[RMDB]
RNA sequence: GGGAACGACUCGAGUAGAGUCGAAAAGUAUAAAAUCUGCAAGUAGUGCUAUUGUUGGAAUCACCGUACCUAUUUAGGUUUACGCUCCAAGAUCGGUGGAUAGCAGCCCUAUCAACAUCUAGGAGAAAAAACCCAGGACUGUUCGCAGUCCUGGGAACCUUAGCGAAUACUUCGGUAUUCGCUAAGGAAAAGAAACAACAACAACAAC
Reactivity to 2A3 in 0.01 (KOAc 150mM, MgCl2 10mM, bicine 150mM(pH8.5), 24C), signal-to-noise 1, nucleotides 027 to 156: g030u010a040u140a300a030a060a080u140c080u140g030c060a110a000g050u130a030g080u110g040c010u030a040u120u030g020u010u060g030g040a050a030u060c000a030c030c000g000u050a010c000c000u070a200u210u180u250a030g000g030u000u040u090a030c050g000c010u000c000c010a040a030g010a000u050c090g030g000u010g070g020a030u050a010g020c030a000g010c000c040c000u080a070u090c030a020a090c000a030u020c010u020a040g000g020a000g000a140a040a010a000a000a000c000c010c000a000g000g010a000c000u030g000u080u070c070g000c090a000g000u000c000c000u000g060g000g000a000a010